Chemical mapping of a 177-nucleotide RNA with DMS and 2A3. For DMS the reverse transcriptase was MarathonRT. It was measured as part of the RMDB library OK2TST. The DMS profile rests on 5,200 reads.
RNA sequence: GGGAACGACUCGAGUAGAGUCGAAAAGAUAGAUACCGCUUCACCCUGCAUCAAAAGAACGAGCCUUAUUCACGAGAUGAUCGGUUUCAGGUAAUGAAUUAUGAGCAAUUUCUUCAGUAUACUGUCAGAACUAUAACCAGUUCGCUGGUUAUAGUUCAAAAGAAACAACAACAACAAC
Reactivity to DMS in 0.01 (KOAc 150mM, MgCl2 10mM, bicine 150mM(pH8.5), 24C), signal-to-noise 5, nucleotides 027 to 126: g010a100u000a060g020a110u010a050c040c090g000c070u000u000c050a080c040c020c010u000g000c030a050u000c100a060a090a060a060g020a060a050c120g000a300g000c020c020u000u000a060u000u000c040a050c040g010a090g010a080u000g000a050u000c110g020g000u000u000u010c030a020g000g020u010a070a050u000g000a050a030u000u000a040u000g000a100g010c080a060a100u000u000u000c020u000u000c060a070g010u000a070u000a090c070u000g000u010c110a160
Reactivity to 2A3 in 0.01 (KOAc 150mM, MgCl2 10mM, bicine 150mM(pH8.5), 24C), signal-to-noise 4, nucleotides 027 to 126: g000a000u090a010g050a020u070a080c010c030g000c050u040u050c020a050c000c000c030u020g000c010a080u020c060a070a100a070a030g050a050a050c070g000a010g010c000c010u060u080a040u040u050c100a090c190g030a030g040a090u170g020a030u040c050g060g010u030u010u030c030a020g040g020u080a080a060u080g050a030a030u130u100a080u160g060a040g010c030a030a070u070u040u010c020u070u040c010a020g040u040a040u020a220c010u040g070u090c020a040